[RMDB]
RNA sequence: GGGAACGACUCGAGUAGAGUCGAAAAUGAUCUCAUUCUCUUUUAUGGCUACAUAGUAUUUCAUGGUAUAUAUGUACCACAUUUCUUUAUCUGGUCUACCGUUGAUGGGCAUUUAGGUUGAUUUCAUGUUUUUGCUAUUGUGACUAGUGCUAUGAUAGGGUGAUUUAAUGUUCGCAUUAAAUCACCCAAAAGAAACAACAACAACAAC
Reactivity to 2A3 in 0.01 (KOAc 150mM, MgCl2 10mM, bicine 150mM(pH8.5), 24C), signal-to-noise 2, nucleotides 027 to 156: u120g020a050u030c030u010c040a040u120u010c020u000c000u020u050u080u030a050u210g010g000c040u010a030c020a060u070a030g030u070a090u080u160u190c090a080u130g060g060u040a030u030a010u000a010u120g040u060a010c020c030a030c010a080u080u170u000c010u070u160u060a110u010c030u030g000g050u000c010u030a030c040c070g050u020u060g020a060u040g030g020g000c020a020u060u070u070a100g000g000u010u010g060a150u020u030u070c020a020u030g050u060u070u010u030u030g020c000u060a060u160u060g030u000g050a020c010u020a070g030u000g070c000u130a020u300g060a040u300a200
The data come from the RNA Mapping Database (RMDB), library OK3TST. The record gives the reactivity of an RNA of 207 nucleotides to 2A3. The RNA was probed in 150 mM KOAc, 10 mM MgCl2 and 150 mM bicine (pH 8.5) at 24 C.